[RMDB]
RNA sequence: GGGAACGACUCGAGUAGAGUCGAAAAGAUGGUGCGCAUGAAGAAGGAAUGCACCUCCGACAUCCCCAUGGGGAUGGAGGACGUCGAGACGCUGCGGUUCUUCUUCGACGGCGUUGACGUCGAUCACAAUUACGUGAGCCUUCGGGCUCACGUAAUUAAAAGAAACAACAACAACAAC
Reactivity to DMS in 0.01 (KOAc 150mM, MgCl2 10mM, bicine 150mM(pH8.5), 24C), signal-to-noise 1, nucleotides 027 to 126: g000a000u020g000g000u000g000c000g000c080a150u040g000a070a090g030a010a080g030g000a080a000u010g000c030a010c030c040u010c000c000g000a160c000a040u000c000c000c000c010a100u030g000g010g010g000a020u010g000g000a230g010g000a050c040g000u000c010g010a300g000a010c140g040c100u000g000c010g000g040u040u000c010u000u000c070u020u020c010g000a130c080g000g010c000g000u000u030g000a170c000g000u000c000g070a050u030c100a060c200